RNA sequence: GGGAACGACUCGAGUAGAGUCGAAAAGUAUAGCGAAGUUAGAGGCGACGAGCUAUACGAUGAAUCAGCCUCGAUUGAUAUCGGUAUACAGAUCCGCGGCGAUCAGAUACCGUAAUUAGUAGCCGCGAUCCGGAGUGGAGACGCACGACGGUCGUCAAGGACCCUAAUAGUUCGCUAUUAGGGUCCUAAAAGAAACAACAACAACAAC
Reactivity to DMS in 0.01 (KOAc 150mM, MgCl2 10mM, bicine 150mM(pH8.5), 24C), signal-to-noise 1, nucleotides 027 to 156: g040u020a000u000a030g020c000g020a100a130g040u000u000a120g000a110g030g030c000g040a060c060g000a300g030c010u020a020u030a010c020g010a140u020g010a170a100u000c080a230g030c030c020u000c040g000a110u010u010g050a180u000a110u000c000g020g000u000a070u000a070c050a260g010a080u000c030c030g050c060g030g050c050g030a000u000c020a190g030a050u000a040c000c080g000u020a030a010u000u000a060g000u000a070g020c000c020g020c080g030a100u010c020c050g060g000a230g030u000g000g020a120g050a210c070g000c060a020c040g000a010c000g010g000u000c050g020u000c000a110
Reactivity to 2A3 in 0.01 (KOAc 150mM, MgCl2 10mM, bicine 150mM(pH8.5), 24C), signal-to-noise 2, nucleotides 027 to 156: g000u000a000u000a040g040c040g090a130a020g000u010u010a130g030a000g010g050c000g000a010c020g000a010g010c020u000a000u000a000c000g000a040u070g070a010a190u230c060a000g000c000c000u010c030g090a130u030u260g060a050u030a010u280c010g000g000u000a000u040a100c020a040g000a000u000c030c090g140c150g080g000c100g010a040u070c010a040g040a060u020a010c000c000g030u010a020a030u130u090a010g170u050a040g000c000c030g050c020g000a000u000c000c030g120g000a020g030u030g030g040a090g010a080c130g020c090a000c010g090a000c010g000g030u040c030g010u020c080a070